The record gives the reactivity of an RNA of 177 nucleotides to DMS and 2A3.
RNA sequence: GGGAACGACUCGAGUAGAGUCGAAAACUACAACCCGUUGCGGUUCCUGCGGGCGGCGAUGAAGUGGUGUCGCAAGGCGCAGGAGUUGGGCACCCUCGACGAGGACGCGGCGCGUUGGAUGCGCCGGCCGCAGUAAACGGUUCGCCGUUUACUGCGGAAAAGAAACAACAACAACAAC
Reactivity to DMS in 0.01 (KOAc 150mM, MgCl2 10mM, bicine 150mM(pH8.5), 24C), signal-to-noise 2, nucleotides 027 to 126: c100u000a100c160a140a200c030c010c020g010u010u010g030c250g000g000u030u000c020c030u020g000c020g010g050g000c230g000g000c000g000a040u030g020a100a100g030u000g050g040u000g010u020c000g040c020a100a060g070g010c000g010c000a010g010g000a040g010u030u000g050g020g000c080a110c080c000c010u000c000g000a100c090g020a070g020g000a060c090g010c060g000g000c050g000c020g000u000u030g000g010a160u010g010c000g000c010c000g000g040
Reactivity to 2A3 in 0.01 (KOAc 150mM, MgCl2 10mM, bicine 150mM(pH8.5), 24C), signal-to-noise 3, nucleotides 027 to 126: c060u110a050c050a060a080c000c010c000g050u040u030g030c050g020g040u030u000c000c000u010g040c030g000g080g070c000g050g000c020g040a070u130g060a210a100g180u200g130g120u120g010u040c010g000c040a030a200g130g000c000g000c030a010g000g020a000g000u040u100g020g040g000c030a040c000c000c000u040c030g080a070c040g040a150g000g060a040c060g060c020g110g000c000g000c010g020u090u170g170g040a140u160g000c000g000c030c000g010g000
The data come from the RNA Mapping Database (RMDB), library OK1LIB.
For 2A3 the reverse transcriptase was SuperScript II with manganese.
The DMS profile rests on 3,001 reads.